[RMDB]
Background:
The data come from the RNA Mapping Database (RMDB), library OK2TST. The record gives the reactivity of an RNA of 177 nucleotides to DMS. The DMS profile rests on 733 reads. The RNA was probed in 150 mM KOAc, 10 mM MgCl2 and 150 mM bicine (pH 8.5) at 24 C.
RNA sequence: GGGAACGACUCGAGUAGAGUCGAAAAUAACGCUUCACUUGACUUCCCGAGGGGAUGGGAGUGUAAUGGGGGAUCCCAUCCGUUGGAGGACCACAUGACCCUUUUCGAUCUGGGAUACCACGAGAAACCGCAUCAACGUAUUCGUACGUUGAUGCGGAAAAGAAACAACAACAACAAC
Reactivity to DMS in 0.01 (KOAc 150mM, MgCl2 10mM, bicine 150mM(pH8.5), 24C), signal-to-noise 1, nucleotides 027 to 126: u010a090a160c050g020c020u000u010c020a070c070u000u000g000a120c110u000u000c010c010c010g020a220g010g010g000g010a040u000g020g000g010a040g000u000g010u000a090a040u000g000g000g020g000g020a270u000c020c000c000a040u000c020c030g000u000u010g030g010a150g030g020a070c040c050a060c170a050u000g020a120c070c020c020u000u000u000u000c110g000a090u000c110u000g010g000g000a110u010a140c030c010a110c050g010a160g010a060a120a090
For DMS the reverse transcriptase was MarathonRT.